[RMDB]
RNA sequence: GGGAACGACUCGAGUAGAGUCGAAAAGAUGAUGAUCAGUGCGGCCUAGUCCUGAGCGUGAAGCAGGUGUGUGGCUGUCCGUCUAGCUGACUCCCUAUGGAGUUUGUCCGUGCGGACUUGGCCGCCUACUAUUCACGAGGUUCGCCUCGUGAAUAGUAAAAGAAACAACAACAACAAC
Reactivity to 2A3 in 0.01 (KOAc 150mM, MgCl2 10mM, bicine 150mM(pH8.5), 24C), signal-to-noise 2, nucleotides 027 to 126: g100a040u250g000a010u070g010a040u090c090a090g020u040g170c000g000g030c000c020u050a000g000u000c000c020u040g100a060g050c010g040u130g020a040a010g030c030a000g050g070u080g030u030g020u040g110g070c040u060g130u020c010c010g040u060c020u040a080g000c030u020g010a010c000u010c030c010c010u080a180u300g000g000a010g010u020u000u130g040u030c000c020g020u040g020c050g000g000a010c000u000u030g010g010c020c010g000c000c000u020
Reactivity to DMS in 0.01 (KOAc 150mM, MgCl2 10mM, bicine 150mM(pH8.5), 24C), signal-to-noise 3, nucleotides 027 to 126: g010a120u000g000a100u010g020a130u010c080a080g000u010g030c020g010g000c010c010u000a040g000u000c000c000u000g030a150g010c020g020u040g020a120a050g020c030a050g020g010u000g000u000g010u000g020g010c040u000g000u000c030c020g010u000c040u010a090g020c030u000g000a010c000u000c000c000c300u010a150u010g010g000a020g000u000u010u010g010u000c050c060g010u000g010c290g000g010a050c000u000u000g010g030c020c000g020c000c030u000